This 207-nucleotide RNA was probed chemically with 2A3. For 2A3, 484 sequencing reads were counted. It was measured as part of the RMDB library OK3TST.

[RMDB]
RNA sequence: GGGAACGACUCGAGUAGAGUCGAAAAGGGGGAGACCCAACCUGGGGCGACUUCAGGGGUGCCACAUUCGCUAAGUGCUCGGAGUUAAUAGCACCUCCUCCGAGCACUCGCUCACGGCGUCCCCUUGCCUGGAAAGAUACCGCGGUCCCUCCAGAGGAAACGAACACAAGUUCGCUUGUGUUCGUUUAAAAGAAACAACAACAACAAC
Reactivity to 2A3 in 0.01 (KOAc 150mM, MgCl2 10mM, bicine 150mM(pH8.5), 24C), signal-to-noise 1, nucleotides 027 to 156: g000g000g030g000g010a160g010a040c000c010c000a020a010c050c040u050g040g020g010g030c070g020a090c130u110u070c300a020g010g000g010g010u050g000c010c010a060c030a160u200u200c030g000c040u100a110a070g000u000g010c000u000c000g000g010a000g030u140u150a230a040u090a300g040c000a070c000c000u030c000c010u010c000c000g000a010g000c000a000c000u000c010g000c000u080c030a050c010g000g010c000g010u150c010c030c000c000u020u060g040c020c020u000g010g070a100a120a030g160a010u160a060c050c050g000c110g010g020u000c000c000c000u000c000c010a060g000a020g020g040